[RMDB]
About this RNA:
This 177-nucleotide RNA was probed chemically with 2A3 and DMS. The DMS profile rests on 5,749 reads. Reactivities are given for positions 27 through 126. 2A3 adducts were read by reverse transcription with SuperScript II with manganese. DMS adducts were read by reverse transcription with MarathonRT. The 2A3 profile rests on 6,645 reads. The RNA was probed in 150 mM KOAc, 10 mM MgCl2 and 150 mM bicine (pH 8.5) at 24 C.
RNA sequence: GGGAACGACUCGAGUAGAGUCGAAAAAUGCAAGGGUCGGCAUCAGGGUCACAGCAUGCUGCAGCGGCUGGCGGCAUCAGUGCGGCGGCGUACCCUCCGGCGCAGGCCAGCCACGAUGCGGUGGUGGCUCCCGUACAUGAUUCGUCAUGUACGGGAGAAAAGAAACAACAACAACAAC
Reactivity to 2A3 in 0.01 (KOAc 150mM, MgCl2 10mM, bicine 150mM(pH8.5), 24C), signal-to-noise 3, nucleotides 027 to 126: a000u100g010c020a050a060g050g000g010u020c020g010g050c020a050u060c030a050g030g030g030u050c040a020c020a070g060c020a060u130g010c020u040g000c010a030g000c020g030g010c000u010g010g000c010g030g030c030a080u070c040a060g120u030g020c020g040g060c010g000g000c000g000u090a090c000c010c000u010c010c010g050g010c010g010c010a000g120g040c000c010a010g020c020c010a020c010g060a080u090g000c000g020g020u040g030g040u040g020g030
Reactivity to DMS in 0.01 (KOAc 150mM, MgCl2 10mM, bicine 150mM(pH8.5), 24C), signal-to-noise 4, nucleotides 027 to 126: a090u010g020c070a100a140g000g000g020u000c060g010g010c080a060u000c070a080g000g000g010u010c040a050c070a090g030c070a070u010g000c030u010g030c050a100g020c080g000g000c030u000g000g010c020g020g020c060a060u010c140a090g020u000g000c030g000g020c030g000g000c230g000u020a100c060c030c030u000c030c020g010g000c010g010c020a040g020g000c010c000a040g000c000c010a030c060g010a100u010g000c040g010g020u000g000g030u000g000g010